[RMDB]
RNA sequence: GGGAACGACUCGAGUAGAGUCGAAAAUUCGCGUGAUUCGUCACGCGAAGAUUAGCGAGAACCGUGCUCGGUAUAAACAUGGAACCCUUGGAAACAAGGGAAAUAGGCAGGCCUUCGGGCCUGCCAACGAUAUGGUAAGCUUCGGCUUACCAUAUCGAAAAGAAACAACAACAACAAC
Reactivity to DMS in 0.01 (KOAc 150mM, MgCl2 10mM, bicine 150mM(pH8.5), 24C), signal-to-noise 3, nucleotides 027 to 126: u000u000c000g010c000g010u000g020a050u000u010c230g030u000c000a010c000g000c010g010a010a000g000a140u000u000a130g000c010g010a020g000a100a110c010c010g040u000g010c030u000c010g020g030u020a050u030a030a030a110c010a040u000g010g010a200a300c000c000c000u010u020g000g000a170a140a200c010a010a020g000g010g010a010a030a070u010a070g000g000c000a010g010g010c000c000u000u010c190g030g000g010c000c000u000g000c000c000a000a010
Reactivity to 2A3 in 0.01 (KOAc 150mM, MgCl2 10mM, bicine 150mM(pH8.5), 24C), signal-to-noise 3, nucleotides 027 to 126: u010u000c000g000c000g000u000g010a020u020u060c180g040u020c140a000c010g000c010g000a010a010g000a040u040u070a040g050c020g010a000g010a070a040c010c000g000u010g010c010u020c020g040g040u220a110u110a150a100a010c010a020u040g010g030a100a090c000c000c000u000u000g010g010a050a030a020c010a010a010g000g000g020a000a030a000u020a010g000g000c010a010g020g010c000c030u080u170c290g030g000g000c020c010u000g000c010c000a000a010